[RMDB]
RNA sequence: GGGAACGACUCGAGUAGAGUCGAAAAGCGCAAAUCCACAAACGCCAACGAUGAGCGUUUCGCUGUAGCCGCUUAAGGCAUCAGCCGGGGCCGCCUGAGCCCUGUUACCAAAGACGGCUGGCGGGGGUAAUUACUUAUUGCUUCGGCAAUAAGUAAACUAAGUAAAUGACUUCGGUCAUUUACUUAGAAAAGAAACAACAACAACAAC
Reactivity to 2A3 in 0.01 (KOAc 150mM, MgCl2 10mM, bicine 150mM(pH8.5), 24C), signal-to-noise 3, nucleotides 027 to 156: g020c020g000c050a040a030a050u030c050c020a090c070a090a100a010c060g010c010c010a090a050c100g130a130u100g000a020g010c000g000u020u070u100c060g010c010u020g020u120a100g010c010c010g030c140u230u200a120a080g000g010c000a040u020c010a050g010c000c030g010g000g000g000c020c080g000c010c030u050g010a010g000c000c000c000u020g050u050u060a030c010c000a020a020a020g020a030c000g000g000c000u050g040g030c020g000g010g010g000g010u040a090a100u070u010a000c000u000u000a000u010u000g010c000u030u020c170g120g000c000a000a000u000a000a000g000u000a000a000a000
Reactivity to DMS in 0.01 (KOAc 150mM, MgCl2 10mM, bicine 150mM(pH8.5), 24C), signal-to-noise 2, nucleotides 027 to 156: g040c010g040c020a050a130a050u000c050c060a090c040a020a230a040c020g010c030c020a050a150c120g020a130u000g040a200g000c020g010u000u000u000c030g030c050u010g030u000a300g000c000c030g000c200u010u000a130a190g010g020c000a110u000c040a020g040c110c080g000g030g000g000c000c020g000c040c070u000g000a120g020c010c010c000u010g020u000u000a120c050c030a050a120a110g040a120c260g020g040c030u010g030g020c020g000g000g030g030g050u010a050a130u000u000a010c000u010u000a020u000u020g000c010u000u010c300g060g020c000a020a000u000a010a020g020u010a000a020a250